Source: RMDB library TTRDEL, as collected in RNAgym. Structure probing data (2A3 and DMS) for a 177-nucleotide construct. The DMS profile rests on 5,422 reads. DMS adducts were read by reverse transcription with MarathonRT. The reactions ran in a buffer of 150 mM KOAc, 10 mM MgCl2 and 150 mM bicine (pH 8.5), at 24 C.
RNA sequence: GGGAACGACUCGAGUAGAGUCGAAAAGAUAUGGAUUGGUGACAUGGCACUGAUGUCGGAAACGACAUCGUGCCAACAGCACCACUGUCCUAAGUCAAAUCUCAGCUUCCUUCGGGAAGCUGAGAAACCAUCACCUUAUGUUCGCAUAAGGUGAUGGAAAAGAAACAACAACAACAAC
Reactivity to 2A3 in 0.01 (KOAc 150mM, MgCl2 10mM, bicine 150mM(pH8.5), 24C), signal-to-noise 4, nucleotides 027 to 126: g030a020u100a060u170g020g010a030u050u090g010g020u010g050a150c090a200u100g020g010c020a010c080u300g000a000u000g010u000c000g000g040a070a070a020c010g000a000c000a000u000c000g000u000g000c010c010a000a000c010a000g000c010a010c000c010a010c030u070g040u000c000c000u040a120a030g040u040c040a100a040a210u000c000u000c000a010g000c010u000u000c000c000u010u070c150g080g000g000a000a000g010c000u000g000a000g000a000a010a000
Reactivity to DMS in 0.01 (KOAc 150mM, MgCl2 10mM, bicine 150mM(pH8.5), 24C), signal-to-noise 5, nucleotides 027 to 126: g000a060u000a300u010g000g010a020u010u000g010g000u000g010a060c070a210u000g000g000c000a010c010u000g030a000u010g010u000c000g000g000a090a090a160c000g010a000c000a000u000c000g030u000g010c000c000a000a010c180a110g010c020a030c010c000a040c300u000g020u000c000c000u010a070a110g010u000c040a090a100a150u010c000u000c000a010g010c000u000u010c000c000u000u000c210g030g010g020a000a020g010c000u010g000a000g010a010a030a110